[RMDB]
RNA sequence: GGGAACGACUCGAGUAGAGUCGAAAAUGCUGAGCUUCUGGAUAAGCUGAGGUCGACGUUCGGUAGCUGGUAUUCACCGAAAGGUGGCAAGGAGUUCUUCAGGCACCCACGAACCGGGGCAGACCUGCCCACGCGCCUUUUUCGAAAGGCGCGUGGGAAAAGAAACAACAACAACAAC
Reactivity to 2A3 in 0.01 (KOAc 150mM, MgCl2 10mM, bicine 150mM(pH8.5), 24C), signal-to-noise 1, nucleotides 027 to 126: u030g000c010u070g000a040g000c000u020u020c010u020g160g000a070u000a030a040g020c020u060g110a060g150g150u030c000g000a060c070g070u000u000c030g030g000u020a050g000c090u010g000g000u010a020u040u100c030a030c000c000g120a020a150a000g000g000u000g000g060c040a000a130g110g030a110g040u060u110c000u040u000c000a010g050g030c000a040c000c000c000a090c040g030a040a040c080c040g010g000g010g000c030a020g020a070c000c030u070g000